Source information
An RNA of 177 nucleotides, treated with 2A3 and read out base by base. 2A3 adducts were read by reverse transcription with SuperScript II with manganese.
[RMDB]
RNA sequence: GGGAACGACUCGAGUAGAGUCGAAAAGCGCGCCAGGUCGGCCUCGCCGUAGCUGCACGGGAAGUCCAUGAUGACUCCCUCAUCGGUGACGACCUGAAUGCGGUGGGAGGGGACCUCGGCCUUCACGGGCACGAGGUACGUUCGCGUACCUCGUGCCAAAAGAAACAACAACAACAAC
Reactivity to 2A3 in 0.01 (KOAc 150mM, MgCl2 10mM, bicine 150mM(pH8.5), 24C), signal-to-noise 2, nucleotides 027 to 126: g200c160g020c030g000c000c000a000g000g000u050c020g010g290c010c000u010c010g120c000c000g030u100a100g090c040u050g030c020a020c040g000g000g000a030a000g000u030c030c040a060u140g000a030u050g010a010c060u090c000c050c000u020c000a010u000c000g000g030u040g000a000c020g010a010c000c000u020g020a080a080u040g010c000g000g090u300g050g060g040a050g020g010g000g000a030c000c000u000c000g010g010c000c000u110u190c090a220c050g040

Notes: High 2A3 reactivity points to a flexible backbone, as in loops and unpaired stretches. Conditions: 150 mM KOAc, 10 mM MgCl2 and 150 mM bicine (pH 8.5), 24 C. Values are in units of 0.01, from 0 to 300, in steps of 10.